[RMDB]
RNA sequence: GGGAACGACUCGAGUAGAGUCGAAAACUCAUCAACAUAAACCUAGGAGUACUAUUCAUACUAGCCAUAUCCAGCCUGGCCGUCUACUCCAUCCUAUGAUCCGGCUGAGCCUCCAACUCAAAAUACGCUGUGUGUGUUGUUUCGACAACACACACAGAAAAGAAACAACAACAACAAC
Reactivity to DMS in 0.01 (KOAc 150mM, MgCl2 10mM, bicine 150mM(pH8.5), 24C), signal-to-noise 1, nucleotides 027 to 126: c000u000c000a100u040c150a020a260c080a000u020a040a020a020c000c050u050a200g000g000a060g050u020a000c150u000a090u000u010c140a150u000a060c070u000a140g000c090c260a020u020a080u000c130c060a130g010c100c190u000g010g000c000c000g000u000c000u120a070c080u000c070c070a000u050c020c000u000a090u000g000a050u050c000c050g020g000c070u000g000a190g000c070c060u010c000c110a020a080c080u020c130a080a170a000a000u000a000c250g000
Reactivity to 2A3 in 0.01 (KOAc 150mM, MgCl2 10mM, bicine 150mM(pH8.5), 24C), signal-to-noise 2, nucleotides 027 to 126: c030u030c000a110u070c050a050a180c030a150u220a120a110a050c020c040u060a060g030g030a020g060u070a060c040u100a130u100u150c060a050u060a150c020u030a030g010c030c010a030u020a060u140c020c020a000g010c000c010u030g020g020c020c010g030u000c010u030a050c020u020c010c010a030u090c010c000u080a100u190g030a070u010c020c020g010g000c020u000g020a000g030c000c020u040c010c000a040a080c010u030c070a030a090a040a020u140a070c040g010